[RMDB]
RNA sequence: GGGAACGACUCGAGUAGAGUCGAAAACAACGUCGGUGAUGUGAGCGGUGGCCGAUGUGGCAAGUUCUUGGGCAAUGGUGGCCUGCAGCCAGAAAAUGUCGUCGAUGUCUUGGCGGGUCAACGGCAGAUCUACAUGACAAUUCGUUGUCAUGUAGAUAAAAGAAACAACAACAACAAC
Reactivity to DMS in 0.01 (KOAc 150mM, MgCl2 10mM, bicine 150mM(pH8.5), 24C), signal-to-noise 9, nucleotides 027 to 126: c080a090a090c080g010u010c020g010g010u000g000a070u020g010u010g010a070g020c060g010g020u010g010g000c020c020g010a050u010g010u010g010g010c070a090a080g010u010u010c050u010u010g010g010g000c050a080a090u020g010g020u010g000g000c030c010u010g010c070a120g000c020c030a070g000a060a050a090a080u020g000u000c020g010u000c040g000a060u010g000u010c050u000u010g010g010c050g010g010g020u000c030a040a040c050g000g010c050a090g000
Reactivity to 2A3 in 0.01 (KOAc 150mM, MgCl2 10mM, bicine 150mM(pH8.5), 24C), signal-to-noise 9, nucleotides 027 to 126: c050a030a040c020g030u020c010g010g030u070g040a120u080g070u050g070a040g010c030g010g050u020g050g000c020c010g030a050u060g030u070g080g010c030a050a060g040u060u040c020u080u100g050g010g000c020a060a110u110g070g010u040g050g030c000c010u030g010c020a020g020c010c000a020g100a020a090a020a040u120g030u040c020g010u010c030g030a040u060g060u040c030u080u080g050g000c000g000g000g020u030c020a040a010c010g010g000c010a010g010
An RNA of 177 nucleotides, treated with DMS and 2A3 and read out base by base. For 2A3 the reverse transcriptase was SuperScript II with manganese. DMS adducts were read by reverse transcription with MarathonRT. The RNA was probed in 150 mM KOAc, 10 mM MgCl2 and 150 mM bicine (pH 8.5) at 24 C. For 2A3, 57,252 sequencing reads were counted.